[RMDB]
RNA sequence: GGGAACGACUCGAGUAGAGUCGAAAAAGGCAAGGGGUUUCGACCCCUUGCCGUACUGACGCCCGAAUCCUGAUUCCUUGCGAAUCCGUGUUCGGGGCCCCGAUUGGCUUCGGCCCGUCGGAGGGGUGAAGCACUGAAUGUUCGCAUUCAGUGCUUCAAAAGAAACAACAACAACAAC
Reactivity to 2A3 in 0.01 (KOAc 150mM, MgCl2 10mM, bicine 150mM(pH8.5), 24C), signal-to-noise 2, nucleotides 027 to 126: a010g000g000c000a000a000g070g020g000g000u040u100u200c170g080a110c000c000c000c000u010u000g000c000c000g010u000a000c000u010g010a000c150g300c000c000c000g000a000a000u060c010c010u010g000a000u000u000c010c050u200u300g020c100g090a000a000u000c000c020g030u000g010u010u000c010g000g000g030g020c010c000c020c000g010a000u000u020g000g000c000u000u030c140g100g010c000c000c000g000u000c000g000g050a200g020g010g000g010u070
Reactivity to DMS in 0.01 (KOAc 150mM, MgCl2 10mM, bicine 150mM(pH8.5), 24C), signal-to-noise 2, nucleotides 027 to 126: a160g000g020c000a000a000g010g020g000g000u000u000u010c160g000a060c010c000c010c000u000u000g020c000c010g010u010a020c090u010g000a110c200g010c010c000c000g010a010a010u000c190c010u000g000a000u000u010c010c030u020u020g020c140g000a000a000u010c000c100g010u010g000u000u000c000g000g000g000g000c040c020c000c000g020a010u000u000g000g000c010u000u040c180g010g000c010c000c050g000u000c000g010g000a100g010g000g020g020u010
Record summary:
Source: RMDB libraries RFM100 and RFMREP, as collected in RNAgym. Structure probing data (2A3 and DMS) for a 177-nucleotide construct.